The record gives the reactivity of an RNA of 177 nucleotides to 2A3. It was measured as part of the RMDB library OK1LIB. For 2A3, 220 sequencing reads were counted.

RNA sequence: GGGAACGACUCGAGUAGAGUCGAAAAAAUCAACUUUUAGAAUAUGCAAAUCUCGACAUUGAUGCUAGCUUUCCAGAACUAGUUCGCAAUUUCACAGCAUUGGAAUGUGUUACACAUCAAAGUGCGAACGCGGGCCGAUAUUCGUAUCGGCCCGCGUAAAAGAAACAACAACAACAAC
Reactivity to 2A3 in 0.01 (KOAc 150mM, MgCl2 10mM, bicine 150mM(pH8.5), 24C), signal-to-noise 1, nucleotides 027 to 126: a030a030u260c070a070a090c070u260u070u070u070a000g050a000a000u060a090u300g000c130a100a100a200u000c090u000c000g000a000c000a040u000u040g000a000u000g030c070u050a000g000c030u000u000u030c000c070a000g000a210a210c240u000a000g070u240u240c000g000c040a040a090u000u170u170c070a070c070a000g250c110a110u070u130g160g070a200a000u000g000u030g110u120u300a000c000a000c000a000u170c000a090a300a000g090u000g250c000g000a000